The record gives the reactivity of an RNA of 177 nucleotides to 2A3 and DMS. For 2A3 the reverse transcriptase was SuperScript II with manganese. It was measured as part of the RMDB library M2PK50. The RNA was probed in 150 mM KOAc, 10 mM MgCl2 and 150 mM bicine (pH 8.5) at 24 C.
RNA sequence: GGGAACGACUCGAGUAGAGUCGAAAACCCUUUGUGUUCGCACAAAGGGAAAAGUCAGAAAGAUCAAAUAGAUCAGCGAUAAAACUGACAAAUAAACGCAAAAAACCUCCUCGUUCGCGAGGAGGAACAUGAGGGUUAAGUUCGCUUAACCCUCAUGAAAAGAAACAACAACAACAAC
Reactivity to 2A3 in 0.01 (KOAc 150mM, MgCl2 10mM, bicine 150mM(pH8.5), 24C), signal-to-noise 3, nucleotides 027 to 126: c010c000c000u000u010u000g020u010g000u000u060c190g050c060a000c000a000a000a000g000g000g020a070a100a000a010g000u000c000a000g060a090a100a010g010a040u020c040a000a150a300u140a100g010a040u030c020a050g130c080g120a050u070a160a060a000a060c010u000g000a000c010a000a120a000u160a040a020a010c060g000c110a020a030a000a040a090a190c000c000u000c000c000u000c030g020u060u060c200g010c010g080a010g010g010a000g000g000a000a010
Reactivity to DMS in 0.01 (KOAc 150mM, MgCl2 10mM, bicine 150mM(pH8.5), 24C), signal-to-noise 2, nucleotides 027 to 126: c000c000c010u000u000u000g000u010g000u000u010c200g000c000a010c010a000a000a010g010g020g020a040a020a050a200g010u000c000a030g010a100a150a130g000a000u000c000a060a190a150u010a110g030a020u000c010a120g020c200g030a110u010a050a070a070a090c030u000g000a030c020a130a080a080u010a040a040a070c140g000c060a000a010a070a110a070a060c010c000u000c000c000u000c000g050u000u010c210g030c020g000a000g000g000a000g010g000a000a010